[RMDB]
RNA sequence: GGGAACGACUCGAGUAGAGUCGAAAAUAAUGCAGGUUAAGCCAAAGGGAUGUCCCGACCGGAGGCCGACAAUCCAGGGAACCGGAUGUCAUCACGUUGUUGCAGUACCAGAUGGCAUCUUAAAUCCAAAAGAACACAUAGUUCGCUAUGUGUUCAAGAAGAGAUAGAACUUCGGUUCUAUCUCUUCAAAAGAAACAACAACAACAAC
Reactivity to DMS in 0.01 (KOAc 150mM, MgCl2 10mM, bicine 150mM(pH8.5), 24C), signal-to-noise 1, nucleotides 027 to 156: u000a080a140u020g010c110a020g000g000u000u000a090a110g000c000c020a020a300a170g000g000g020a110u010g000u000c000c000c000g000a150c030c010g000g020a300g000g020c000c020g000a080c110a060a140u010c010c010a130g000g010g010a140a070c050c020g000g010a030u010g020u000c030a020u000c030a210c240g010u020u000g030u000u010g000c000a060g030u000a070c010c030a140g010a060u020g010g000c010a000u000c010u000u000a060a060a090u010c030c030a050a090a140a180g010a010a010c000a000c000a010u000a010g030u000u000c270g000c010u010a000u000g010u010g010u000u010c000a070a110
Reactivity to 2A3 in 0.01 (KOAc 150mM, MgCl2 10mM, bicine 150mM(pH8.5), 24C), signal-to-noise 2, nucleotides 027 to 156: u270a030a040u140g050c030a060g120g030u100u130a060a020g000c000c000a000a020a020g060g000g000a060u030g040u040c020c010c010g000a010c000c010g000g010a000g010g000c010c000g000a020c040a100a130u110c080c070a040g040g010g030a060a030c050c090g030g010a000u030g000u000c000a000u010c000a000c150g020u020u040g000u030u000g070c110a120g100u130a110c020c040a020g000a000u000g010g000c000a000u000c000u010u020a040a140a010u000c000c000a030a070a020a080g010a000a000c000a000c000a000u000a000g030u040u070c090g010c100u000a000u000g000u000g000u000u000c000a000a000
Record summary: Source: RMDB library M2RFPK, as collected in RNAgym. Structure probing data (DMS and 2A3) for a 207-nucleotide construct. The 2A3 profile rests on 1,093 reads.